Overview:
Chemical mapping of a 207-nucleotide RNA with 2A3. It was measured as part of the RMDB library M2RFPK. The 2A3 profile rests on 1,023 reads.
[RMDB]
RNA sequence: GGGAACGACUCGAGUAGAGUCGAAAAACGAGGUACGCCUCGAAAAUAUGACCGGUGUCAUAGCCUCUAGCACACAGAGCUCGCGUGGGUUCAACUCCCCCCCUUUUCCGAGGGUAUCGGAAACCAAAAAACACAAUUUGGUUCGCCAAAUUGUGAACCAGAGUUCUAGGUUCGCCUAGAACUCUGGAAAAGAAACAACAACAACAAC
Reactivity to 2A3 in 0.01 (KOAc 150mM, MgCl2 10mM, bicine 150mM(pH8.5), 24C), signal-to-noise 1, nucleotides 027 to 156: a000c010g000a010g010g010u050a040c110g090c010c000u000c000g000a180a000a030a000u140a030u080g050a010c070c060g150g030u150g060u160c040a040u030a060g030c040c010u020c050u070a080g050c050a020c020a010c020a090g060a020g080c000u060c060g050c080g030u120g020g050g000u070u140c030a050a090c030u030c000c000c000c000c000c000c000u020u040u000u040c000c000g000a000g010g000g020u040a030u000c000g000g000a000a000a000c020c030a000a000a010a070a070a030c000a000c000a000a000u000u000u000g040g000u020u040c100g010c050c000a000a000a000u000u000g000u010g000a000a000